[RMDB]
RNA sequence: GGGAACGACUCGAGUAGAGUCGAAAACCUACUAAUAUAGCUUUUGAACUCUAUGCUAAGCGUGCUGUACGCUCGCAUCCCGAUUUCAAAUUGCUACACAAUUUACAAGCAGACAUUUGCUACAAGUUAGGGGGCACGUUCGCGUGCCCCAAAAGAAACAACAACAACAAC
Reactivity to 2A3 in 0.01 (KOAc 150mM, MgCl2 10mM, bicine 150mM(pH8.5), 24C), signal-to-noise 2, nucleotides 027 to 129: c000c000u080a030c030u110a060a180u220a030u020a090g000c000u000u000u000u080g000a000a010c000u010c020u020a000u040g000c000u050a000a130g040c000g040u030g030c100u160g120u050a010c000g000c020u020c050g000c030a000u000c120c040c050g000a050u000u000u000c000a000a000a000u040u000g010c000u040a010c050a030c040a000a030u000u040u230a070c100a030a000g040c000a000g110a040c060a180u040u100u080g000c010u030a030c010a080a100g070u000u000a020g010
Reactivity to DMS in 0.01 (KOAc 150mM, MgCl2 10mM, bicine 150mM(pH8.5), 24C), signal-to-noise 2, nucleotides 027 to 129: c000c000u000a050c240u260a050a240u020a150u000a020g020c110u020u000u000u000g000a000a080c060u050c000u000a000u000g010c060u020a000a000g000c040g020u010g090c090u160g080u020a060c060g020c010u010c300g000c000a040u060c180c030c110g000a000u060u010u070c070a000a130a000u000u000g160c050u080a020c140a070c070a000a000u060u180u000a230c120a070a010g050c010a050g000a160c150a030u000u300u000g000c020u010a090c080a080a180g010u000u000a040g010
Description
This 170-nucleotide RNA was probed chemically with 2A3 and DMS. For DMS, 1,761 sequencing reads were counted. The RNA was probed in 150 mM KOAc, 10 mM MgCl2 and 150 mM bicine (pH 8.5) at 24 C. Reactivities are given for positions 27 through 129. For 2A3 the reverse transcriptase was SuperScript II with manganese. For DMS the reverse transcriptase was MarathonRT. The data come from the RNA Mapping Database (RMDB), library 15KLIB.